[RMDB]
RNA sequence: GGGAACGACUCGAGUAGAGUCGAAAAUGGGUCCAGGUCAUUGGGCGGUUCACCCAGAUACCUGGGCUACCAGUGGCCUUACCAUCUUCAGUGUGCAGCUUCCAAGGUCACCCUGGAUGUAGACAUCCCGCUGGUGUACCAGGAAAGUACUAAACAAGUUUUAUCGGACUUUCGAGUCCGAUAAAACAAAAGAAACAACAACAACAAC
Reactivity to 2A3 in 0.01 (KOAc 150mM, MgCl2 10mM, bicine 150mM(pH8.5), 24C), signal-to-noise 2, nucleotides 027 to 156: u120g000g050g010u070c120c000a030g010g000u020c050a020u010u020g030g000g050c160g080g130u290u230c060a040c030c010c000a020g000a140u180a070c040c020u000g000g000g000c000u000a000c000c000a010g000u000g060g000c020c000u000u050a030c010c090a020u000c090u120u070c070a110g070u060g010u020g210c050a080g110c020u070u060c010c010a180a060g010g010u000c010a010c000c000c000u000g000g020a000u000g020u120a100g060a260c010a060u000c000c000c040g010c230u100g000g000u000g010u040a080c000c000a000g000g030a010a050a010g050u070a040c110u230a060a150a000c070a120a000
The data come from the RNA Mapping Database (RMDB), library OK3TST.
An RNA of 207 nucleotides, treated with 2A3 and read out base by base.
Values cover nucleotides 27 to 156.
For 2A3, 796 sequencing reads were counted.